[RMDB]
RNA sequence: GGGAACGACUCGAGUAGAGUCGAAAAGAAGGUUGGUGACCUACCGUGAUGAACUGAAAAAGAUUCAAAGUAGCGGUUUGAGCGAUGUGUAUAGACAGUAACCCGGUAAAAUGUACUGAAAAUAGGGCAGACAUCUGAAGUUCGCUUCAGAUGUCUGAAAAGAAACAACAACAACAAC
Reactivity to DMS in 0.01 (KOAc 150mM, MgCl2 10mM, bicine 150mM(pH8.5), 24C), signal-to-noise 1, nucleotides 027 to 126: g030a090a010g020g000u000u010g000g060u030g000a160c040c010u000a110c040c040g010u000g030a180u010g020a040a110c050u000g000a040a090a110a170a040g000a160u030u000c020a010a070a230g020u040a190g010c040g010g010u000u010u000g000a170g000c090g000a070u000g060u000g010u000a100u000a080g000a090c040a050g020u010a070a140c020c060c000g080g000u000a060a040a070a100u010g020u000a040c020u010g010a040a030a050a070u010a100g000g000g000
Source: RMDB library RFMREP, as collected in RNAgym. This 177-nucleotide RNA was probed chemically with DMS. The reactions ran in a buffer of 150 mM KOAc, 10 mM MgCl2 and 150 mM bicine (pH 8.5), at 24 C. The DMS profile rests on 604 reads.